[RMDB]
RNA sequence: GGGAACGACUCGAGUAGAGUCGAAAACCAAGUCCUAAGGUGCAGGAGACUUCUCUCCUGCACUAUGGAUGCAGUUCAACGACUAGACGGUGAUGGGCUAGCGUAAUGAAUGCGUUCUGCACACUCUUACGCCGGCUUAAGAUAUAGUCUACUCCCACCGAAGGCGUAAGUUCGCUUACGCCUUCGGAAAAGAAACAACAACAACAAC
Reactivity to 2A3 in 0.01 (KOAc 150mM, MgCl2 10mM, bicine 150mM(pH8.5), 24C), signal-to-noise 1, nucleotides 027 to 156: c020c020a080a040g020u000c000c000u070a130a080g010g000u000g000c000a000g060g000a020g000a100c150u300u060c070u070c000u010c200c000u000g000c000a000c000u000a000u010g000g000a020u070g080c100a010g000u060u070c110a170a040c060g040a030c010u030a020g050a090c070g000g120u150g070a130u170g090g010g020c000u000a030g020c010g000u000a050a010u060g020a170a300u000g000c040g050u270u270c210u300g030c000a000c000a000c010u020c010u010u020a000c010g000c000c020g000g000c000u010u010a080a020g030a000u110a020u040a120g000u000c000u010a030c040u000c030c000c010a000